[RMDB]
RNA sequence: GGGAACGACUCGAGUAGAGUCGAAAACAAUGGAUUUUGAAGACAGGGUAUUGGCCUCACGAUUGAGCUCCUGCAUCAGGAAAUCCAGCCGCCGGCCUUUCUGGCCACCUGCUUUCAACACACGCUCUCUAGACUCAGUAUUCGUACUGAGUCUAGAAAAAGAAACAACAACAACAAC
Reactivity to 2A3 in 0.01 (KOAc 150mM, MgCl2 10mM, bicine 150mM(pH8.5), 24C), signal-to-noise 2, nucleotides 027 to 126: c030a040a100u160g060g010a050u020u040u110u140g020a000a020g030a030c010a000g030g010g050u150a160u230u180g060g010c020c010u100c010a050c120g130a120u020u090g050a040g010c050u060c020c000u040g070c080a150u100c040a060g010g050a040a180a090u030c060c010a030g040c040c020g100c030c050g000g000c000c030u060u150u100c080u040g000g000c000c000a020c000c000u000g010c050u030u050u070c060a090a000c030a000c050a010c050g000c010u080c010
Reactivity to DMS in 0.01 (KOAc 150mM, MgCl2 10mM, bicine 150mM(pH8.5), 24C), signal-to-noise 3, nucleotides 027 to 126: c110a140a130u030g030g010a150u000u010u000u010g000a130a060g000a080c020a020g010g000g000u000a100u030u010g010g000c050c020u010c110a050c210g010a110u000u000g020a070g010c140u010c030c020u000g000c140a120u010c050a060g010g000a080a080a040u010c020c030a090g000c040c060g000c180c170g030g000c020c020u000u000u020c130u000g010g010c020c020a070c040c020u010g000c010u000u010u000c040a010a040c250a060c150a060c130g010c090u000c080

The record gives the reactivity of an RNA of 177 nucleotides to 2A3 and DMS.
The 2A3 profile rests on 1,163 reads.
Values cover nucleotides 27 to 126.
For 2A3 the reverse transcriptase was SuperScript II with manganese.
The reactions ran in a buffer of 150 mM KOAc, 10 mM MgCl2 and 150 mM bicine (pH 8.5), at 24 C.
DMS adducts were read by reverse transcription with MarathonRT.